RNA sequence: GGGAACGACUCGAGUAGAGUCGAAAAACAGCUUGGGGGCCUUGCUGAACAAGCUAUUUGUAGUGACUAGCACACUGAGCUCCCCAGGUGUAUGACCUGCCAUUAAAUGCUUAGGGUCCUAGUACUGCCCCUGUAUUCAAUUCGUUGAAUACAGGGGAAAAGAAACAACAACAACAAC
Reactivity to DMS in 0.01 (KOAc 150mM, MgCl2 10mM, bicine 150mM(pH8.5), 24C), signal-to-noise 5, nucleotides 027 to 126: a080c070a090g010c020u000u000g010g000g010g010g010c090c150u010u010g010c060u000g020a170a170c110a090a060g000c040u000a080u010u010u000g020u010a100g020u010g000a070c050u000a040g010c170a050c060a060c030u000g000a050g000c010u010c010c010c010c010a030g000g020u000g000u010a080u000g010a070c050c020u000g000c150c100a090u000u000a030a050a130u010g000c030u000u000a050g000g000g000u000c080c040u000a040g000u000a080c090u000g000
Reactivity to 2A3 in 0.01 (KOAc 150mM, MgCl2 10mM, bicine 150mM(pH8.5), 24C), signal-to-noise 4, nucleotides 027 to 126: a020c030a020g100c000u030u020g000g000g010g020g000c020c030u030u090g000c020u020g030a090a030c040a070a050g020c010u040a100u040u180u120g180u050a080g010u020g100a040c040u050a030g010c050a020c000a020c090u040g020a030g040c010u110c010c010c000c000a010g000g030u030g030u040a180u150g050a040c000c010u010g070c030c000a080u170u170a070a130a080u150g020c010u030u100a020g040g000g000u030c000c000u000a010g040u050a080c050u090g020
The record gives the reactivity of an RNA of 177 nucleotides to DMS and 2A3. The 2A3 profile rests on 4,530 reads.